[RMDB]
RNA sequence: GGGAACGACUCGAGUAGAGUCGAAAACUUGCUUCGGAAUCCGGCUCGCGGUCGGCUUGAAGCCCGUCAGUCCGCAGAGCGCGGCGGGGAUGCGGAUCGAGCCGCCCGUAUCGGUCGCGAGCGCGAAGUAGUAAUGCCAUUUCGAUGGCAUUACUACAAAAGAAACAACAACAACAAC
Reactivity to DMS in 0.01 (KOAc 150mM, MgCl2 10mM, bicine 150mM(pH8.5), 24C), signal-to-noise 5, nucleotides 027 to 126: c080u010u000g010c060u000u010c030g010g010a150a180u010c070c020g010g000c160u000c160g020c010g000g000u000c010g010g000c010u000u010g020a060a110g000c080c000c020g000u000c040a100g000u010c000c000g000c000a140g010a120g020c190g020c040g010g020c030g010g000g000g000a080u000g000c120g010g000a300u000c020g010a020g000c010c020g010c090c000c000g000u000a060u000c140g000g020u000c030g010c070g010a060g010c170g020c060g000a050a080
Reactivity to 2A3 in 0.01 (KOAc 150mM, MgCl2 10mM, bicine 150mM(pH8.5), 24C), signal-to-noise 1, nucleotides 027 to 126: c010u020u170g010c020u070u080c020g040g160a160a100u040c020c010g010g020c080u080c100g020c020g010g000u020c010g000g000c000u000u000g030a110a020g140c000c000c000g050u050c010a060g120u060c010c010g000c030a060g030a090g280c150g000c050g030g000c010g010g000g040g040a030u060g010c090g020g020a030u020c000g010a000g010c000c000g010c020c000c000g010u010a030u050c020g020g000u010c030g040c070g030a010g000c080g000c030g050a040a010
Structure probing data (DMS and 2A3) for a 177-nucleotide construct. The RNA was probed in 150 mM KOAc, 10 mM MgCl2 and 150 mM bicine (pH 8.5) at 24 C. For DMS the reverse transcriptase was MarathonRT. 2A3 adducts were read by reverse transcription with SuperScript II with manganese. High DMS reactivity at an A or C suggests that its Watson-Crick edge is free.